[RMDB]
RNA sequence: GGGAACGACUCGAGUAGAGUCGAAAAUGAGUGAACCACUUCUGCCAAAACCUCAUAAGAUGUUGGAGAAGCUGUCUGUGCCAUUGAGGACCACCCUCCAAGUCUACCUUUUCAAACAGUGCAUGAGCUAUACGGCGGGCUUCGGCCCGCCGUAUAGAAAAGAAACAACAACAACAAC
Reactivity to 2A3 in 0.01 (KOAc 150mM, MgCl2 10mM, bicine 150mM(pH8.5), 24C), signal-to-noise 1, nucleotides 027 to 126: u210g000a060g020u080g060a080a030c000c000a040c110u110u020c020u040g060c000c000a000a000a130a150c000c010u150c040a060u100a040a040g000a080u050g100u050u020g030g010a090g000a030a020g050c050u020g040u000c030u030g020u050g150c080c010a100u120u070g000a060g090g010a010c040c000a000c070c040c010u000c000c000a080a000g000u000c000u000a010c040c040u030u000u000u100c050a080a150a100c050a050g110u050g060c000a030u080g110a030g120